[RMDB]
RNA sequence: GGGAACGACUCGAGUAGAGUCGAAAACAGCAAUCCAGGACGGGAAGUGCAGUGCACACCUUUCCAACACAUGUGCCGUCUGUCUUGAGGAGACGAAACGUAACGACAAGAAACUCAAGUGUAAGCACGUCUUUCAUUCCAAGUGCAUCAUCAAGUGCUGGAAUCACUACUUCGGUAGUGAUUCCAGAAAAGAAACAACAACAACAAC
Reactivity to 2A3 in 0.01 (KOAc 150mM, MgCl2 10mM, bicine 150mM(pH8.5), 24C), signal-to-noise 2, nucleotides 027 to 156: c030a020g140c000a000a050u020c050c140a080g000g030a030c010g010g040g020a110a100g040u060g090c020a040g040u000g140c030a000c000a040c020c000u000u020u040c000c070a100a120c060a000c040a090u170g010u050g070c010c000g000u040c040u010g080u030c020u000u040g050a000g050g020a000g100a000c060g000a030a130a000c060g040u140a090a000c060g050a070c060a130a060g030a170a020a000c040u040c010a000a020g030u030g060u120a070a020g020c050a030c080g030u000c000u000u130u130c030a140u090u060c050c010a020a000g000u010g010c060a060u050c000a020u030c030a060a130g090u160g020
About this RNA
The record gives the reactivity of an RNA of 207 nucleotides to 2A3. The RNA was probed in 150 mM KOAc, 10 mM MgCl2 and 150 mM bicine (pH 8.5) at 24 C. It was measured as part of the RMDB library OK3TST.